Source: RMDB library OK3TST, as collected in RNAgym. This 207-nucleotide RNA was probed chemically with 2A3 and DMS. The DMS profile rests on 1,906 reads.
RNA sequence: GGGAACGACUCGAGUAGAGUCGAAAAGUAUCAAGGAGUUGCAGCAGUUCAUCCAGGUGGCCAAGGCCUACCAGGACCGCUAUCAGGACCUGGGGGCCUACAGUUCUGCCAGGAAGUGCCUGGCCAAACAGAGGCAGAGGAUGCUGCAAGAGAGAAAUAUGGUACGUAUGUUCGCAUACGUACCAUAAAAAGAAACAACAACAACAAC
Reactivity to 2A3 in 0.01 (KOAc 150mM, MgCl2 10mM, bicine 150mM(pH8.5), 24C), signal-to-noise 1, nucleotides 027 to 156: g020u030a040u280c060a000a040g120g030a140g000u050u100g030c010a030g020c030a050g000u070u150c000a010u000c000c010a030g220g120u150g130g000c030c000a020a020g000g010c000c000u040a300c120c020a000g000g000a080c000c010g050c150u090a070u300c140a030g000g040a090c000c000u000g000g000g000g000g010c000c050u030a000c000a000g000u010u080c000u020g000c000c010a000g020g030a190a170g070u050g170c000c000u000g000g000c000c010a000a030a000c000a050g040a070g120g050c020a000g030a010g080g000a000u000g010c020u000g010c010a010a000g030a000g000a000g010a010a050a000
Reactivity to DMS in 0.01 (KOAc 150mM, MgCl2 10mM, bicine 150mM(pH8.5), 24C), signal-to-noise 1, nucleotides 027 to 156: g000u010a110u000c070a050a240g000g000a170g040u000u000g000c000a040g000c000a060g020u000u000c060a090u010c010c020a220g010g050u010g000g010c010c040a060a030g010g030c010c010u010a080c020c030a010g020g010a090c000c020g000c040u000a230u010c110a130g000g000a090c010c030u000g000g010g000g010g000c020c000u000a000c070a120g000u000u010c060u000g010c030c000a020g000g060a090a130g010u000g020c000c000u010g050g000c010c130a000a020a040c070a140g060a150g010g060c010a050g000a110g040g000a110u020g000c000u000g030c000a040a050g000a090g000a060g030a120a120a240
Reactivities are given for positions 27 through 156. 2A3 adducts were read by reverse transcription with SuperScript II with manganese. For 2A3, 669 sequencing reads were counted.